Annotation
Chemical mapping of a 177-nucleotide RNA with 2A3 and DMS. The RNA was probed in 150 mM KOAc, 10 mM MgCl2 and 150 mM bicine (pH 8.5) at 24 C. The 2A3 profile rests on 1,708 reads. For DMS the reverse transcriptase was MarathonRT. For 2A3 the reverse transcriptase was SuperScript II with manganese. It was measured as part of the RMDB library OK2TRN.

RNA sequence: GGGAACGACUCGAGUAGAGUCGAAAAGUGGCGCAUUCGUACCUCUGAUCGUCAGGCACUGGACCCAGGUUACUGGACGGCUGAACGUCGCCAGUUGAGAGACCUGCUGACUUCCAUCACUGUGUCAUGAUCCCCAGCUAUUCGUAGCUGGGGAUCAAAAAGAAACAACAACAACAAC
Reactivity to 2A3 in 0.01 (KOAc 150mM, MgCl2 10mM, bicine 150mM(pH8.5), 24C), signal-to-noise 2, nucleotides 027 to 126: g040u010g000g020c010g040c080a100u080u110c090g030u060a060c000c060u000c060u060g050a050u060c020g030u040c080a030g010g000c010a050c080u030g050g020a050c000c010c000a020g030g000u040u060a020c020u020g100g040a190c010g030g010c030u050g110a130a020c120g030u010c010g000c000c010a010g000u010u130g080a220g000a000g050a020c010c000u010g050c020u020g020a050c000u060u030c020c010a050u070c020a000c080u080g030u010g000u050c040a110
Reactivity to DMS in 0.01 (KOAc 150mM, MgCl2 10mM, bicine 150mM(pH8.5), 24C), signal-to-noise 3, nucleotides 027 to 126: g000u000g010g000c030g000c110a080u010u010c060g050u010a110c060c040u000c040u000g000a070u020c060g020u000c030a060g010g010c070a060c080u000g020g010a100c150c080c030a070g040g020u000u000a030c010u000g000g000a090c010g000g000c000u000g000a070a270c140g020u010c000g010c000c010a020g000u000u000g000a140g000a190g000a060c010c030u000g000c100u010g020a090c080u010u000c080c070a140u000c050a070c080u000g010u000g010u000c090a120